This 207-nucleotide RNA was probed chemically with 2A3.
The 2A3 profile rests on 888 reads.
For 2A3 the reverse transcriptase was SuperScript II with manganese.
Conditions: 150 mM KOAc, 10 mM MgCl2 and 150 mM bicine (pH 8.5), 24 C.

RNA sequence: GGGAACGACUCGAGUAGAGUCGAAAAAGAGCCGGAUACGUCCGGCUCAACGGGGGAUACGUGUGGUGCCGUCCGCUCCCCCUAUGGCAUAACAAAUACACCACACACUAGGCUACGGCCUAGUGAAAAAAGGUGUAUGUGUUCGCACAUACACCAAGCAAGGGGUAUAGUUCGCUAUACCCCUUGCAAAAGAAACAACAACAACAAC
Reactivity to 2A3 in 0.01 (KOAc 150mM, MgCl2 10mM, bicine 150mM(pH8.5), 24C), signal-to-noise 1, nucleotides 027 to 156: a000g000a000g000c000c000g010g000a010u010a050c170g060u000c000c000g000g000c000u000c000a000a000c010g000g020g000g010g000a050u060a200c060g040u030g000u040g060g000u010g110c110c040g150u060c010c050g020c040u060c000c010c010c040c020u040a150u220g060g000c100a040u060a150a060c120a020a090a020u170a050c000a000c010c000a000c010a000c000a000c000u000a000g000g030c020u060a000c170g070g010c000c000u000a000g010u010g020a090a010a000a000a010a010g000g000u010g010u000a000u010g000u000g050u050u090c260g020c080a000c000a000u000a000c000a000c000c000a000a000